[RMDB]
RNA sequence: GGGAACGACUCGAGUAGAGUCGAAAAAGCACCUAUGGGUGUCUAUGACUUUAAGGUCUCAACACAAGAGUUCAGAUUCAUGACUGCUAACAAUCUAACUGCACCUAGAAAUUCUUGGGAGGCUAUGUACGACUCACGUUCGCGUGAGUCAAAAGAAACAACAACAACAAC
Reactivity to DMS in 0.01 (KOAc 150mM, MgCl2 10mM, bicine 150mM(pH8.5), 24C), signal-to-noise 4, nucleotides 027 to 129: a000g020c020a070c000c000u020a170u100g020g000g010u020g000u000c030u000a020u010g030a110c050u040u050u030a100a100g040g010u040c020u020c060a130a030c060a100c000a080a050g000a020g000u030u010c060a040g000a060u010u040c030a130u000g030a070c110u000g000c130u020a120a120c090a010a010u020c000u040a030a040c140u030g020c040a060c050c030u010a070g020a040a050a050u050u000c020u000u000g000g000g000a030g000g000c040u040a060u000g000u010a100c110
Reactivity to 2A3 in 0.01 (KOAc 150mM, MgCl2 10mM, bicine 150mM(pH8.5), 24C), signal-to-noise 2, nucleotides 027 to 129: a000g010c030a010c010c010u050a160u230g200g010g000u010g040u000c040u050a110u140g080a100c030u130u110u100a080a030g040g000u000c000u010c020a060a130c070a010c010a100a060g000a000g030u020u020c020a000g000a120u030u070c030a020u120g100a080c030u050g010c030u050a070a030c040a080a120u010c010u070a000a070c030u050g000c030a030c030c030u040a030g040a040a130a010u070u030c020u020u020g030g010g000a010g020g000c010u030a060u120g070u050a020c060